An RNA of 177 nucleotides, treated with DMS and 2A3 and read out base by base. The reactions ran in a buffer of 150 mM KOAc, 10 mM MgCl2 and 150 mM bicine (pH 8.5), at 24 C. It was measured as part of the RMDB library OK1LIB. The 2A3 profile rests on 4,808 reads.
[RMDB]
RNA sequence: GGGAACGACUCGAGUAGAGUCGAAAACAGUGAUGGAAACAUCACUGAAAAACGUGUAAGCGCAUCACGAAAAAGUCGAUCGAAUACCGAUCGACAAGCGCUAAAGUCAUGCCGAAAGGCAUGACAAGGCAUAGGGUAGGUUCGCCUACCCUAUGCCAAAAGAAACAACAACAACAAC
Reactivity to DMS in 0.01 (KOAc 150mM, MgCl2 10mM, bicine 150mM(pH8.5), 24C), signal-to-noise 1, nucleotides 027 to 126: c040a000g020u000g000a000u010g010g000a120a100a150c000a010u000c000a000c000u030g000a050a030a070a110a210c000g000u000g010u000a080a010g000c010g010c010a100u030c010a010c000g020a040a030a020a000a010g020u000c000g070a000u000c020g050a250a160u020a150c300c010g000a020u000c000g000a000c000a000a000g000c010g000c000u000a180a050a010g010u000c000a000u000g000c000c010g000a070a070a100g000g000c000a000u000g000a000c010a020a030
Reactivity to 2A3 in 0.01 (KOAc 150mM, MgCl2 10mM, bicine 150mM(pH8.5), 24C), signal-to-noise 4, nucleotides 027 to 126: c010a000g010u000g000a010u000g030g010a020a090a010c000a010u000c000a000c000u010g000a010a000a000a020a010c010g000u000g000u010a070a040g000c000g000c010a020u050c010a010c090g300a150a000a000a000a000g000u000c000g000a000u000c000g000a020a070u160a300c130c010g000a000u000c010g000a000c000a010a000g000c000g000c000u030a050a000a000g010u010c000a000u000g000c010c000g080a140a030a010g000g000c010a000u000g010a000c000a000a050